Conditions: 150 mM KOAc, 10 mM MgCl2 and 150 mM bicine (pH 8.5), 24 C. Chemical mapping of a 177-nucleotide RNA with 2A3 and DMS. For 2A3 the reverse transcriptase was SuperScript II with manganese. DMS adducts were read by reverse transcription with MarathonRT.

[RMDB]
RNA sequence: GGGAACGACUCGAGUAGAGUCGAAAAAGGUUGAAUCCCUCUGUGCUAUGUCAAAAUAGCAAAGGAGGUCCAAUGACAAGCCUACUAUAUUAACCAUUGGGAAGGAUAUAGGCUCCUUAUCUCAAAGGUAGGCAAAUAAUUUCGAUUAUUUGCCUACAAAAGAAACAACAACAACAAC
Reactivity to 2A3 in 0.01 (KOAc 150mM, MgCl2 10mM, bicine 150mM(pH8.5), 24C), signal-to-noise 3, nucleotides 027 to 126: a000g040g000u050u030g030a090a020u050c010c020c000u000c010u020g070u020g000c000u010a010u030g040u020c050a050a000a060a090u000a000g000c000a000a060a050g020g010a000g030g010u070c010c050a100a070u200g030a050c030a060a020g030c040c000u050a070c080u040a040u050a060u220u150a120a090c040c040a090u090u120g120g010g000a050a030g070g000a040u060a010u040a190g130g000c010u020c000c000u100u140a170u000c060u010c040a070a040a010g090
Reactivity to DMS in 0.01 (KOAc 150mM, MgCl2 10mM, bicine 150mM(pH8.5), 24C), signal-to-noise 5, nucleotides 027 to 126: a030g010g020u000u000g010a090a070u000c070c010c000u000c020u000g010u000g010c000u010a010u000g000u010c300a060a080a120a010u000a000g010c010a050a060a110g000g000a050g000g010u000c090c070a030a040u010g020a140c180a080a070g010c010c010u010a070c170u000a060u000a040u010u000a080a220c030c020a220u010u000g010g010g000a060a110g010g000a060u010a110u010a030g010g000c050u000c020c020u000u000a080u000c030u010c020a060a100a090g000